Structure probing data (DMS and 2A3) for a 177-nucleotide construct.
RNA sequence: GGGAACGACUCGAGUAGAGUCGAAAAGAAUAUUGAAAGCUUGAUAUCGGGAGAGGUCAAGCGCAUAGAUCACCACGAUUCCUAGCAAUGCGCCGAGAAUUGCCAUGGAUACCAUCCCGAUUGCCCAACCGUCCAUUGAGUUCGCUCAAUGGACGGUAAAAGAAACAACAACAACAAC
Reactivity to DMS in 0.01 (KOAc 150mM, MgCl2 10mM, bicine 150mM(pH8.5), 24C), signal-to-noise 1, nucleotides 027 to 126: g020a120a040u040a200u020u000g010a150a190a130g030c010u000u000g000a030u000a100u000c000g000g040g010a060g010a080g040g040u000c030a100a050g020c020g000c040a040u000a080g000a100u000c060a080c030c060a100c140g000a210u000u000c040c060u020a160g000c070a050a040u000g000c100g030c100c080g010a090g000a010a040u010u010g060c020c040a050u000g010g000a070u000a080c030c040a130u000c010c010c030g010a150u000u000g020c010c000c000a050
Reactivity to 2A3 in 0.01 (KOAc 150mM, MgCl2 10mM, bicine 150mM(pH8.5), 24C), signal-to-noise 1, nucleotides 027 to 126: g000a030a000u110a090u240u170g030a210a070a070g030c020u030u000g070a010u070a010u160c030g070g010g000a100g030a180g010g000u030c000a050a000g000c000g000c050a010u060a060g110a060u050c030a030c150c000a050c050g070a040u000u130c040c020u010a040g000c010a050a050u040g090c060g000c090c140g130a070g070a210a100u060u000g040c050c040a110u100g020g000a000u040a150c050c000a030u090c000c020c010g060a010u040u150g070c040c020c000a030

Notes:
For 2A3 the reverse transcriptase was SuperScript II with manganese. For DMS, 579 sequencing reads were counted. It was measured as part of the RMDB library OK2TST. Reactivities are given for positions 27 through 126.